[RMDB]
RNA sequence: GGGAACGACUCGAGUAGAGUCGAAAACAUGGAGUCUUCGGACUCCAUGCACUACCGAAAUAAUGCCUCGGUAUAAAAGGCAAACCCUUCGAAACAAGGGAACGAUGUCACGAUUCGUCGUGACAAACUAACAAUCUCUGUUCGCAGAGAUUGUUAGAAAAGAAACAACAACAACAAC
Reactivity to 2A3 in 0.01 (KOAc 150mM, MgCl2 10mM, bicine 150mM(pH8.5), 24C), signal-to-noise 9, nucleotides 027 to 126: c000a010u000g000g000a010g000u000c030u070u070c290g080g010a000c000u000c000c000a000u000g000c000a030c020u040a010c000c000g030a060a060a070u220a050a060u080g010c000c000u010c010g000g000u060a050u180a240a070a000a010g010g000c020a020a040a230c010c010c000u030u050c110g180a130a060a060c040a050a020g000g000g040a010a030c060g100a130u110g000u000c000a000c000g010a010u040u060c200g030u000c000g000u110g000a000c000a010a010a000
Reactivity to DMS in 0.01 (KOAc 150mM, MgCl2 10mM, bicine 150mM(pH8.5), 24C), signal-to-noise 6, nucleotides 027 to 126: c000a000u000g000g000a020g010u000c000u000u020c180g040g000a000c000u000c000c000a010u000g000c060a190c050u000a030c000c000g000a070a130a100u010a120a100u000g010c000c000u000c000g000g010u000a090u010a020a030a070a040g000g010c010a030a080a210c010c000c010u000u000c050g010a140a110a170c300a030a000g000g000g010a100a070c230g010a130u010g000u000c000a010c000g000a040u000u010c190g010u000c000g010u000g000a000c010a010a030a140
The data come from the RNA Mapping Database (RMDB), library M2PK50. Structure probing data (2A3 and DMS) for a 177-nucleotide construct. The RNA was probed in 150 mM KOAc, 10 mM MgCl2 and 150 mM bicine (pH 8.5) at 24 C. For DMS the reverse transcriptase was MarathonRT. For 2A3, 19,904 sequencing reads were counted.